[RMDB]
RNA sequence: GGGAACGACUCGAGUAGAGUCGAAAAAAAUGUUAAAACUACUUACGAGUGUCGCCAAAUGACACACAGAAACAGGUCUUACACCUGUUCUUCUGUUCACAGAGGGUCUGAAAUAAAAGUGCUGUGUUUUUGCAACAAGCCACUGCCUCAUGAUGGCCAUCUGUUUACCCUUCGGGGUAAACAGAUGAAAAGAAACAACAACAACAAC
Reactivity to 2A3 in 0.01 (KOAc 150mM, MgCl2 10mM, bicine 150mM(pH8.5), 24C), signal-to-noise 2, nucleotides 027 to 156: a000a000a000u150g000u090u020a110a180a020a090c010u080a010c050u090u040a080c090g050a030g090u010g020u020c030g040c110c080a030a120a110u040g010a000c010a000c020a000c000a050g050a000a040a000c010a000g020g010u060c110u150u200a050c100a020c060c000u000g010u000u020c000u030u020c000u020g010u040u070c020a040c040a040g050a030g030g000g020u020c050u020g120a130a080a070u120a000a130a080a040g060u060g060c020u020g040u010g000u110u050u020u160u220g070c050a050a010c010a000a040g010c000c010a020c020u040g020c010c060u040c020a020u110g040a090u040g010g000c000
Reactivity to DMS in 0.01 (KOAc 150mM, MgCl2 10mM, bicine 150mM(pH8.5), 24C), signal-to-noise 1, nucleotides 027 to 156: a040a080a010u020g000u010u010a020a080a040a070c060u000a050c030u020u000a160c090g000a180g010u000g030u000c030g000c020c130a070a130a120u000g050a050c050a070c060a070c000a040g000a080a000a010c010a010g010g010u010c090u000u010a120c190a040c000c000u000g010u010u000c090u020u010c020u000g010u010u000c050a090c050a100g000a070g000g020g030u000c060u010g010a050a100a080u000a120a070a080a070g010u000g020c020u010g050u000g000u010u000u000u000u010g000c030a050a040c050a030a010g000c060c010a030c040u000g020c030c030u020c000a110u010g000a160u000g010g000c150